Chemical mapping of a 177-nucleotide RNA with DMS and 2A3. Conditions: 150 mM KOAc, 10 mM MgCl2 and 150 mM bicine (pH 8.5), 24 C. For 2A3, 2,424 sequencing reads were counted.

[RMDB]
RNA sequence: GGGAACGACUCGAGUAGAGUCGAAAAUUUCCUGUAAAACACCGCAACGCAGGAAAAGCGCAUGCUUAUCGGGACAACAACCCAACGCGGCAGGUGUACCGUUGGGCAAAACGUUUACUGGCGCGUUAGAAAUAUAUGGGUUCGCCCAUAUAUUUCUAAAAGAAACAACAACAACAAC
Reactivity to DMS in 0.01 (KOAc 150mM, MgCl2 10mM, bicine 150mM(pH8.5), 24C), signal-to-noise 3, nucleotides 027 to 126: u000u000u000c000c010u000g030u000a050a080a090a120c080a050c160c090g000c120a090a100c130g000c020a040g000g010a040a050a030a140g010c020g020c100a060u010g000c020u000u000a080u010c020g000g010g000a060c060a050a070c120a140a110c000c010c040a050a040c070g000c090g000g000c030a060g000g000u000g000u000a020c090c000g000u000u000g020g000g010c170a040a060a060a140c060g000u000u000u000a110c050u000g000g000c010g010c020g000u000u000
Reactivity to 2A3 in 0.01 (KOAc 150mM, MgCl2 10mM, bicine 150mM(pH8.5), 24C), signal-to-noise 2, nucleotides 027 to 126: u010u000u010c010c000u010g010u030a030a100a030a030c090a040c020c090g050c070a080a030c050g000c010a020g090g000a020a080a030a020g020c040g010c050a040u120g020c020u050u050a040u150c040g020g010g030a010c010a060a020c000a030a100c050c010c020a040a030c030g020c080g060g030c030a060g040g140u180g040u190a050c010c010g020u030u010g020g030g030c070a030a070a000a070c010g010u030u030u040a050c010u010g090g000c000g000c000g010u000u010